[RMDB]
RNA sequence: GGGAACGACUCGAGUAGAGUCGAAAAAGUCCCGCUUCUAGUUCAUUUUUCAAAUCUUUUAUUCAAAAUUUUGCUUAGAAUUUGAAUAAGAGAUUUGAGAAUUGAACUAGAAGCAGGACUUUCGCAGGCUAAUAAGGGAUUUCGAUCCCUUAUUAGCAAAAGAAACAACAACAACAAC
Reactivity to 2A3 in 0.01 (KOAc 150mM, MgCl2 10mM, bicine 150mM(pH8.5), 24C), signal-to-noise 3, nucleotides 027 to 126: a000g000u000c010c000c000g010c000u000u000c000u000a000g000u000u000c000a000u020u000u020u000u000c000a010a000a000u010c000u010u020u010u000a010u000u000c010a030a100a180a300u040u070u090u160g070c040u110u110a080g040a100a080u030u000u000g000a000a000u000a000a000g010a000g000a000u000u000u000g000a000g000a000a000u010u010g000a000a010c000u000a000g000a000a000g000c000a000g000g000a000c000u010u010u010c060g030c080a030g170